[RMDB]
RNA sequence: GGGAACGACUCGAGUAGAGUCGAAAAUUUCUUGAUGGUUCUCUUGGCCUUCCGGAGCCUUCUCUCGAGAUCGUCCGCAUCCUUUCUUGCCUGCACCCACUUUUCGAGGAUGUCUUCCCUUCCUCCCACGGUUCAAGGUUCGCCUUGAACAAAAGAAACAACAACAACAAC
Reactivity to DMS in 0.01 (KOAc 150mM, MgCl2 10mM, bicine 150mM(pH8.5), 24C), signal-to-noise 9, nucleotides 027 to 129: u020u010u000c000u010u030g020a080u030g010g030u020u010c040u010c130u020u040g020g000c010c040u010u010c040c050g010g000a080g020c050c030u010u020c020u000c020u000c010g010a020g000a130u020c040g020u000c040c050g020c050a060u020c030c030u020u050u030c050u020u020g030c010c000u000g030c100a090c020c010c000a110c040u030u020u020u030c060g030a080g000g000a070u010g000u000c010u000u000c050c000c010u020u010c000c000u000c010c000c010a080c190g010
Reactivity to 2A3 in 0.01 (KOAc 150mM, MgCl2 10mM, bicine 150mM(pH8.5), 24C), signal-to-noise 9, nucleotides 027 to 129: u050u050u010c010u020u070g040a070u090g050g020u140u050c060u020c000u100u180g050g000c000c000u050u010c030c050g020g010a020g020c010c000u080u050c020u000c000u000c010g050a060g040a300u020c010g040u020c010c010g020c040a100u090c010c000u050u080u060c020u050u070g040c000c010u030g010c030a050c010c010c000a050c030u040u060u050u070c040g030a040g060g030a070u070g030u010c000u010u020c000c000c000u010u030c000c010u020c010c000c010a060c050g070

Chemical mapping of a 170-nucleotide RNA with DMS and 2A3. For DMS the reverse transcriptase was MarathonRT.